[RMDB]
RNA sequence: GGGAACGACUCGAGUAGAGUCGAAAACACCAGGAGGGUGGAGGAGAGACCACCUCCAGAGGACCCCUUCAGCGAACAGAAGAGCUCCCUCCUCCGGAGAGAGAAGACCAUAGCGAUAGGGGGAGAUAUGCAAGCAGCUUCGGCUGCUUGAAAAGAAACAACAACAACAAC
Reactivity to DMS in 0.01 (KOAc 150mM, MgCl2 10mM, bicine 150mM(pH8.5), 24C), signal-to-noise 5, nucleotides 027 to 129: c150a160c020c030a050g010g000a020g030g070g060u020g020g030a080g030g050a160g020a200g010a090c010c020a080c020c000u010c020c020a070g010a080g000g000a130c060c030c020c020u010u030c070a120g000c030g040a060a110c000a000g040a050a050g010a040g000c030u020c000c050c020u000c030c030u010c080c080g000g000a040g010a000g000a020g030a020a050g000a110c030c010a010u040a160g010c060g000a150u030a080g010g000g000g000g000a070g010a110u030a020u000g030
Reactivity to 2A3 in 0.01 (KOAc 150mM, MgCl2 10mM, bicine 150mM(pH8.5), 24C), signal-to-noise 6, nucleotides 027 to 129: c100a070c010c010a000g030g020a030g000g130g030u120g030g040a080g070g040a100g000a030g040a050c000c000a000c000c020u000c000c010a020g050a080g010g020a030c000c000c000c000u040u040c040a040g010c010g040a040a030c030a130g140a150a000g030a080g050c010u020c000c000c000u000c000c010u010c020c060g040g000a010g000a000g000a010g020a100a000g030a040c030c040a090u090a040g030c020g050a060u100a080g000g000g000g090g010a000g000a030u180a010u110g050

Structure probing data (DMS and 2A3) for a 170-nucleotide construct. Conditions: 150 mM KOAc, 10 mM MgCl2 and 150 mM bicine (pH 8.5), 24 C. 2A3 adducts were read by reverse transcription with SuperScript II with manganese. For 2A3, 11,022 sequencing reads were counted.